[RMDB]
RNA sequence: GGGAACGACUCGAGUAGAGUCGAAAAAGGGUUGAGAAGGCUGCGGGGGGCCCUGGGCUAGUACGGAGCCAUCCACUGUCCAGACCACUGUCCCUGUGCUCACAUGUGCUCAGCAAUGCUGGGACGGGACGUAGAUGGGAUUCGUCCCAUCUACGUCAAAAGAAACAACAACAACAAC
Reactivity to DMS in 0.01 (KOAc 150mM, MgCl2 10mM, bicine 150mM(pH8.5), 24C), signal-to-noise 3, nucleotides 027 to 126: a080g010g010g010u000u000g000a090g010a190a110g000g020c030u010g010c090g000g010g000g010g010g020c040c050c030u010g000g000g000c030u010a050g020u000a070c160g020g000a080g000c150c110a070u000c010c020a060c030u000g020u000c010c010a080g000a100c060c030a110c070u000g010u000c090c000c000u000g000u010g010c020u000c050a080c150a100u000g000u010g010c030u010c050a060g000c010a090a090u010g020c050u000g010g000g010a020c010g000g010
Reactivity to 2A3 in 0.01 (KOAc 150mM, MgCl2 10mM, bicine 150mM(pH8.5), 24C), signal-to-noise 2, nucleotides 027 to 126: a000g090g000g000u070u050g000a030g020a150a030g010g000c030u010g050c130g070g000g000g000g000g010c010c000c030u000g000g000g030c060u120a010g010u040a080c050g000g020a010g020c080c030a060u000c020c010a050c010u020g030u000c000c010a000g000a010c000c030a060c040u050g050u040c020c000c000u030g080u080g020c050u100c020a120c030a110u140g090u200g140c020u000c040a020g000c050a120a240u200g040c020u040g010g000g030a030c000g020g040

The record gives the reactivity of an RNA of 177 nucleotides to DMS and 2A3. The DMS profile rests on 3,126 reads. Conditions: 150 mM KOAc, 10 mM MgCl2 and 150 mM bicine (pH 8.5), 24 C. For DMS the reverse transcriptase was MarathonRT.